RNA sequence: GGGAACGACUCGAGUAGAGUCGAAAAGCAGCGCAGCCUCCCACCAAGGGCCCUGCGACCACAGCAGGGAUUGGGAUGAAUUGCCUGUCCUGGAUCUGCUCUAGAGGCCCAAGCUGCCUGCCUGAGGGCUGUACGCUGUGUUCGCACAGCGUACAGCAAAAGAAACAACAACAACAAC
Reactivity to DMS in 0.01 (KOAc 150mM, MgCl2 10mM, bicine 150mM(pH8.5), 24C), signal-to-noise 1, nucleotides 027 to 126: g000c000a000g010c300g030c040a000g010c000c030u000c000c000c000a160c190c190a200a090g000g030g010c000c010c030u000g040c110g020a030c170c120a100c200a110g020c050a080g000g010g000a010u000u000g000g010g010a170u030g030a070a130u000u000g000c010c000u000g000u000c010c100u000g010g000a030u040c010u000g010c030u010c070u000a000g000a150g000g010c000c030c020a140a090g000c000u000g000c030c010u000g000c010c050u000g020a080g020g000
Reactivity to 2A3 in 0.01 (KOAc 150mM, MgCl2 10mM, bicine 150mM(pH8.5), 24C), signal-to-noise 1, nucleotides 027 to 126: g010c020a030g080c000g000c070a000g000c000c030u040c030c020c000a020c070c100a110a210g060g000g000c010c030c030u040g000c050g030a100c000c060a050c050a050g030c010a010g010g000g020a040u060u130g050g040g050a040u070g180a170a300u150u090g100c000c000u030g000u080c010c010u000g000g010a130u050c040u120g000c020u000c010u020a050g010a100g090g090c040c000c000a030a020g020c010u030g000c000c000u000g020c000c020u100g100a060g010g120
This 177-nucleotide RNA was probed chemically with DMS and 2A3. The DMS profile rests on 695 reads. Values cover nucleotides 27 to 126.